[RMDB]
RNA sequence: GGGAACGACUCGAGUAGAGUCGAAAACUGAACCGAUCAACAAAUUGGAUCUAGACAAGCUCAAGAUGAUCAGGACCGAGAUCCAUGAGGUAGACUUUACGUUGUGGGAUAACGCAGCAAUCCUGAGGCUCUACGAUAUGUUCGCAUAUCGUAGAGCAAAAGAAACAACAACAACAAC
Reactivity to DMS in 0.01 (KOAc 150mM, MgCl2 10mM, bicine 150mM(pH8.5), 24C), signal-to-noise 2, nucleotides 027 to 126: c050u000g000a090a110c060c050g000a050u010c060a050a080c150a040a120a110u000u020g000g000a020u010c040u010a120g020a080c130a140a070g030c010u000c060a150a100g000a100u000g000a040u000c020a030g000g000a080c050c020g010a030g000a070u000c030c000a030u000g010a040g000g000u010a030g010a080c150u010u000u000a050c060g030u000u010g010u020g010g000g020a070u000a040a100c060g010c100a020g030c160a080a120u000c000c010u000g000a060g000
Reactivity to 2A3 in 0.01 (KOAc 150mM, MgCl2 10mM, bicine 150mM(pH8.5), 24C), signal-to-noise 2, nucleotides 027 to 126: c040u020g010a020a020c030c010g000a100u050c030a000a180c020a000a150a110u130u100g040g030a020u030c030u010a050g040a130c050a090a030g010c010u080c090a050a060g100a250u200g030a010u030c060a010g000g000a030c000c020g070a040g020a050u050c000c000a050u040g050a000g030g000u030a020g070a160c080u150u100u090a020c070g190u000u000g000u000g060g000g000a030u080a110a040c080g000c080a000g020c060a020a050u080c030c000u060g010a040g110